[RMDB]
RNA sequence: GGGAACGACUCGAGUAGAGUCGAAAAAAACUUUUGUGACCUGCUGAAACGGGACUAAUCUCCUCACCGAGGCUAAGCAAGUAAAAUACGCCUCUCAUAUCCUUACCUGAGGGUGGUAAGGAAAUAACCUGCAACGCUUCCUUCGGGAAGCGUUGAACUCAAUUGGGAGAUUCGUCUCCCAAUUGAGAAAAGAAACAACAACAACAAC
Reactivity to 2A3 in 0.01 (KOAc 150mM, MgCl2 10mM, bicine 150mM(pH8.5), 24C), signal-to-noise 1, nucleotides 027 to 156: a000a000a030c140u130u060u030u140g020u040g040a140c000c000u000g000c040u060g080a040a070a090c040g010g000g000a020c000u020a090a090u060c010u000c030c020u040c010a060c020c050g060a040g010g030c000u020a040a100g030c140a160a020g040u160a120a060a040a040u060a010c070g030c020c000u000c020u000c040a000u030a040u120c000c000u020u000a010c000c000u040g120a080g040g020g000u020g010g000u010a010a000g000g030a000a000a000u010a000a010c060c050u040g000c000a000a000c000g020c000u000u000c000c000u000u030c160g090g000g010a020a000g000c010g000u000u000g000a010a000